[RMDB]
Conditions: 150 mM KOAc, 10 mM MgCl2 and 150 mM bicine (pH 8.5), 24 C.
Structure probing data (2A3 and DMS) for a 177-nucleotide construct.
For DMS the reverse transcriptase was MarathonRT.
It was measured as part of the RMDB libraries RFM100 and RFMREP.
For DMS, 842 sequencing reads were counted.
RNA sequence: GGGAACGACUCGAGUAGAGUCGAAAAGACGCAGAGCCGAUUUUAGGGUGCCUAUUGUCCAUGUAAACGAUGUUGAAUAUCUUCAUCACAUACCGGGCAUAACGUUGAGUGAGGCACCGACAUUGUUCCCGAUCAGUCAAUUCGUUGACUGAUCGGGAAAAGAAACAACAACAACAAC
Reactivity to 2A3 in 0.01 (KOAc 150mM, MgCl2 10mM, bicine 150mM(pH8.5), 24C), signal-to-noise 2, nucleotides 027 to 126: g040a000c020g000c080a000g050a020g120c080c070g140a110u030u090u040u190a120g020g000g030u000g000c000c030u110a170u100u000g000u000c020c010a030u190g040u040a040a010a110c070g000a020u000g000u020u020g040a090a060u050a070u180c000u020u000c000a010u040c030a000c020a020u000a040c020c040g000g020g020c000a010u020a190a010c080g050u110u180g080a090g040u180g030a060g000g000c000a000c000c000g000a010c000a040u040u100g010u020u030
Reactivity to DMS in 0.01 (KOAc 150mM, MgCl2 10mM, bicine 150mM(pH8.5), 24C), signal-to-noise 1, nucleotides 027 to 126: g000a120c000g000c130a080g000a050g040c060c010g050a140u000u040u090u000a090g100g060g000u000g000c000c010u000a030u000u000g000u000c000c000a100u140g000u000a000a130a100c300g000a000u000g000u000u010g000a100a040u000a280u000c000u000u030c000a000u000c000a160c300a060u010a070c060c300g000g000g060c000a000u030a100a040c020g060u000u000g010a230g000u000g000a100g080g050c030a050c050c000g000a060c040a080u000u090g030u000u000